Conditions: 150 mM KOAc, 10 mM MgCl2 and 150 mM bicine (pH 8.5), 24 C. An RNA of 177 nucleotides, treated with 2A3 and DMS and read out base by base. The DMS profile rests on 1,841 reads. Source: RMDB library OK2TST, as collected in RNAgym.
[RMDB]
RNA sequence: GGGAACGACUCGAGUAGAGUCGAAAACAAUGAUCUGUCUGAGCACCUCAACUGACUGAUCAUUUUCGGUAUCACCAAUGCCUUCAAUCGCUGCCAGUUUGCGCUGCAGGUUAUCGGUGCUGGCGUAUGCAAAUUACCUGUUCGCAGGUAAUUUGCAAAAAGAAACAACAACAACAAC
Reactivity to 2A3 in 0.01 (KOAc 150mM, MgCl2 10mM, bicine 150mM(pH8.5), 24C), signal-to-noise 2, nucleotides 027 to 126: c020a000a040u000g000a020u000c010u030g050u000c020u050g020a020g050c010a090c100c070u090c070a040a080c060u040g020a010c000u010g010a010u000c020a000u040u020u050u110c040g030g060u040a050u070c010a020c020c000a000a030u060g020c000c000u030u120c030a050a100u050c060g000c070u040g050c000c010a120g010u090u150u090g050c070g000c040u040g030c000a010g070g050u110u140a070u080c040g060g000u000g030c010u020g020g020c030g050u050a040
Reactivity to DMS in 0.01 (KOAc 150mM, MgCl2 10mM, bicine 150mM(pH8.5), 24C), signal-to-noise 2, nucleotides 027 to 126: c080a080a020u000g000a010u000c000u000g000u010c000u000g030a150g040c110a160c120c040u000c060a080a090c050u000g010a030c010u000g000a020u010c000a030u000u000u000u000c090g010g010u010a040u000c040a040c030c040a060a050u000g010c000c010u010u000c080a050a080u000c070g000c040u000g040c070c100a100g010u000u000u000g010c030g020c190u000g020c070a030g010g000u000u020a050u000c050g010g010u000g000c040u010g010g010c010g010u000a070